[RMDB]
Annotation: The record gives the reactivity of an RNA of 177 nucleotides to 2A3 and DMS. The data come from the RNA Mapping Database (RMDB), library OK2TRN. Values are in units of 0.01, from 0 to 300, in steps of 10. For DMS the reverse transcriptase was MarathonRT. Conditions: 150 mM KOAc, 10 mM MgCl2 and 150 mM bicine (pH 8.5), 24 C.
RNA sequence: GGGAACGACUCGAGUAGAGUCGAAAAGGGCACCCGGCCGUUCGAGCGCAAGCAGUACGUAGAGAAGUUCACCGAGCUCGCCGAUGGUGUAGUGGAACCCGUUGAACAGCAACGGUUCCUGGCCGUACCCUCAGAUUAGUUUCGACUAAUCUGAGGGAAAAGAAACAACAACAACAAC
Reactivity to 2A3 in 0.01 (KOAc 150mM, MgCl2 10mM, bicine 150mM(pH8.5), 24C), signal-to-noise 4, nucleotides 027 to 126: g030g020g000c010a010c020c010c000g000g000c010c020g030u040u070c070g030a090g080c000g020c080a110a050g000c010a030g060u150a050c070g050u140a040g020a030g050a300a070g080u120u090c040a030c080c050g010a020g010c010u030c030g000c000c000g010a030u050g010g000u030g010u030a060g050u040g020g000a010a000c080c100c030g000u000u010g040a230a070c050a100g250c000a040a000c000g010g000u000u000c010c000u010g030g040c020c010g020u070a080
Reactivity to DMS in 0.01 (KOAc 150mM, MgCl2 10mM, bicine 150mM(pH8.5), 24C), signal-to-noise 4, nucleotides 027 to 126: g010g010g020c050a040c030c020c020g000g030c000c010g010u010u000c020g000a140g010c020g010c130a080a070g010c000a050g070u000a060c090g010u000a140g010a090g010a130a120g010u010u010c030a080c020c030g000a090g010c030u010c060g000c050c020g010a050u000g010g010u010g010u000a030g010u000g010g010a010a010c120c020c080g020u000u000g010a130a150c280a140g000c020a010a010c010g000g000u000u000c010c010u000g010g000c000c010g000u010a210